[RMDB]
RNA sequence: GGGAACGACUCGAGUAGAGUCGAAAAGUUGCUGGUAAAGAGAAUAUUGAUUUAAAUAUCUAUAGACCUUUAUUCGGAAAUGGUUCGUCUCCAGAUGAAUGGAAGGAUGAAGUACCGAGUAUUGAAACACUAUACUUGGAUUCGUCCAAGUAUAGUGAAAAGAAACAACAACAACAAC
Reactivity to 2A3 in 0.01 (KOAc 150mM, MgCl2 10mM, bicine 150mM(pH8.5), 24C), signal-to-noise 2, nucleotides 027 to 126: g080u060u040g030c010u040g000g060u060a080a100a030g140a020g050a170a010u080a010u030u080g000a000u000u050u300a130a190a270u120a050u100c020u010a060u040a080g070a080c000c000u000u030u010a000u050u080c010g000g040a090a030a120u160g100g000u040u030c000g010u000c040u000c050c030a080g020a200u160g180a270a070u040g020g000a050a020g050g010a010u020g020a000a000g090u010a070c000c020g010a020g000u000a100u030u100g080a040a040a040
Reactivity to DMS in 0.01 (KOAc 150mM, MgCl2 10mM, bicine 150mM(pH8.5), 24C), signal-to-noise 4, nucleotides 027 to 126: g010u000u000g010c020u000g010g010u000a020a070a070g010a170g010a100a160u000a020u000u010g000a050u000u010u010a100a100a110u010a060u000c000u000a070u010a090g000a200c030c010u000u000u000a000u000u000c010g010g000a070a070a100u010g000g010u000u000c030g000u000c010u000c000c020a030g000a170u010g020a130a120u000g020g010a040a080g000g020a020u010g010a020a050g020u000a130c010c000g010a060g010u010a040u010u000g000a190a130a140
Overview: Conditions: 150 mM KOAc, 10 mM MgCl2 and 150 mM bicine (pH 8.5), 24 C. The record gives the reactivity of an RNA of 177 nucleotides to 2A3 and DMS. Reactivities are given for positions 27 through 126. It was measured as part of the RMDB library OK2TST.